Conditions: 150 mM KOAc, 10 mM MgCl2 and 150 mM bicine (pH 8.5), 24 C.
This 177-nucleotide RNA was probed chemically with 2A3 and DMS.
For DMS, 9,790 sequencing reads were counted.
2A3 adducts were read by reverse transcription with SuperScript II with manganese.
RNA sequence: GGGAACGACUCGAGUAGAGUCGAAAAGAUAUGGAGCUGAGGAGGGAGCAUCAUAUCGGAAACGAUAUGUAUGCUUUGAUCUCCCAGCUCCUAAGUCAAAAGAAUUGUCUGUUCGCAGACAAUUCAAUCUAAACGUUAGGUUCGCCUAACGUUUAGAAAAAGAAACAACAACAACAAC
Reactivity to 2A3 in 0.01 (KOAc 150mM, MgCl2 10mM, bicine 150mM(pH8.5), 24C), signal-to-noise 2, nucleotides 027 to 126: g000a000u010a010u040g010g010a000g010c010u000g030a190g140g020a000g000g050g010a030g000c000a000u020c000a000u000a000u010c000g000g010a010a000a000c010g000a010u000a000u010g120u080a030u030g000c010u150u110u040g020a010u000c010u000c000c000c000a000g000c010u000c000c000u000a000a010g000u010c000a010a010a030a150g010a000a010u030u010g010u000c000u020g110u110u140c300g000c140a000g010a010c000a000a000u010u000c000a000a010
Reactivity to DMS in 0.01 (KOAc 150mM, MgCl2 10mM, bicine 150mM(pH8.5), 24C), signal-to-noise 4, nucleotides 027 to 126: g010a020u000a040u000g000g010a010g040c000u000g010a230g020g010a030g020g010g010a010g020c000a010u000c000a010u000a000u000c000g010g000a010a020a030c000g010a020u000a000u000g000u050a020u000g020c000u000u010u020g010a040u010c000u000c000c000c010a010g010c000u000c000c000u000a000a060g000u000c010a120a100a130a160g010a010a000u000u000g010u000c000u000g010u000u010c290g020c010a010g000a010c000a010a010u000u000c000a120a140